[RMDB]
RNA sequence: GGGAACGACUCGAGUAGAGUCGAAAAUUGCUUCCAGAAUAGACCCGGCUUGACAGAUGGAUCAAGAAGGGAGAAAAACCUUCCCUAUUGGAGAACUUCUGACACUUCAUUGUCUGCUAGCAGAAUAAUACCAAAUGUCCUUCGGGACAUUUGGUAUAAAAGAAACAACAACAACAAC
Reactivity to DMS in 0.01 (KOAc 150mM, MgCl2 10mM, bicine 150mM(pH8.5), 24C), signal-to-noise 2, nucleotides 027 to 126: u000u050g030c040u000u010c140c000a100g000a110a150u010a150g020a070c030c030c040g030g010c030u000u010g040a040c060a130g000a130u000g050g040a250u000c010a020a010g000a020a080g000g020g000a170g010a040a070a040a100a170c070c070u010u000c000c020c000u010a150u010u000g010g030a070g010a090a060c060u000u010c040u000g000a110c090a010c090u010u020c070a070u010u020g000u000c030u000g000c060u020a070g020c000a080g000a150a130u050a050
Reactivity to 2A3 in 0.01 (KOAc 150mM, MgCl2 10mM, bicine 150mM(pH8.5), 24C), signal-to-noise 4, nucleotides 027 to 126: u080u040g020c010u080u040c030c000a020g030a110a120u170a070g070a120c000c000c020g030g060c000u020u020g000a020c040a000g170a160u190g140g090a150u030c010a010a000g040a010a050g110g000g040a040g030a090a080a030a020a000c000c000u040u070c000c000c000u030a040u040u130g040g010a060g000a050a110c020u110u080c030u050g020a030c020a010c030u090u120c090a090u060u170g030u020c010u020g000c070u010a010g000c020a000g000a100a080u170a140